[RMDB]
RNA sequence: GGGAACGACUCGAGUAGAGUCGAAAACUAGCGGAUUGGGGGGAAGAAAAGCCGAAAUGGAUUCCCGGGUUCAUGGAUGGAAGAGAAGGGAGUUUCGAAUUCCUGCAGCUCGGUCUGUCCGGAGAGAUCUAUACUUGGUGUUCGCACCAAGUAUAGAAAAAGAAACAACAACAACAAC
Reactivity to 2A3 in 0.01 (KOAc 150mM, MgCl2 10mM, bicine 150mM(pH8.5), 24C), signal-to-noise 6, nucleotides 027 to 126: c010u010a010g020c010g020g040a070u060u100g040g000g010g000g030g020a030a020g040a020a130a010a010g070c010c030g080a110a080a110u180g050g010a040u030u020c010c010c000g020g000g000u030u030c070a070u100g020g000a010u040g010g030a040a010g030a020g010a040a040g020g000g000a040g000u000u020u120c080g060a050a040u040u020c000c000u050g030c030a060g050c000u040c060g080g080u020c020u030g010u010c020c000g010g000a040g000a000g010a040
Reactivity to DMS in 0.01 (KOAc 150mM, MgCl2 10mM, bicine 150mM(pH8.5), 24C), signal-to-noise 7, nucleotides 027 to 126: c080u010a150g000c120g000g000a130u030u000g000g010g000g000g000g000a070a090g010a080a080a070a120g020c040c030g010a050a060a090u030g000g010a130u020u000c020c010c010g000g000g000u010u000c050a060u020g010g010a040u010g000g000a050a110g000a050g000a070a140g000g000g000a040g010u000u010u010c150g010a080a080u010u000c010c000u000g010c240a150g000c010u010c040g000g010u000c010u000g010u000c020c020g000g000a120g010a100g000a120
Structure probing data (2A3 and DMS) for a 177-nucleotide construct. Reactivities are rounded to 0.1 and cut off at 0 and 3. Reactivities are given for positions 27 through 126.